The record gives the reactivity of an RNA of 177 nucleotides to DMS. For DMS, 596 sequencing reads were counted. DMS adducts were read by reverse transcription with MarathonRT.
RNA sequence: GGGAACGACUCGAGUAGAGUCGAAAAGAGCGAGUUAAUAUUAGAUCGUCGCGAUCUAAAGAGUCCGACACGCUGUCGCGGGGCAGCACCUCCCGGGAAAGGGCCCUUGGUACGAAUUCGAAAGAAACAUCCUCGAUAGGUUCGCCUAUCGAGGAUGAAAAGAAACAACAACAACAAC
Reactivity to DMS in 0.01 (KOAc 150mM, MgCl2 10mM, bicine 150mM(pH8.5), 24C), signal-to-noise 1, nucleotides 027 to 126: g020a120g050c020g020a050g010u000u000a030a190u000a100u000u020a020g000a010u020c050g020u060c250g030c160g010a010u000c020u000a000a020a160g000a230g010u000c010c030g020a110c070a090c050g050c040u000g010u020c050g020c190g000g000g040g020c000a050g020c000a170c090c050u010c000c000c020g000g000g000a030a110a190g020g000g020c000c000c010u020u020g000g020u010a070c150g010a010a170u000u000c010g000a010a060a170g020a080a060a180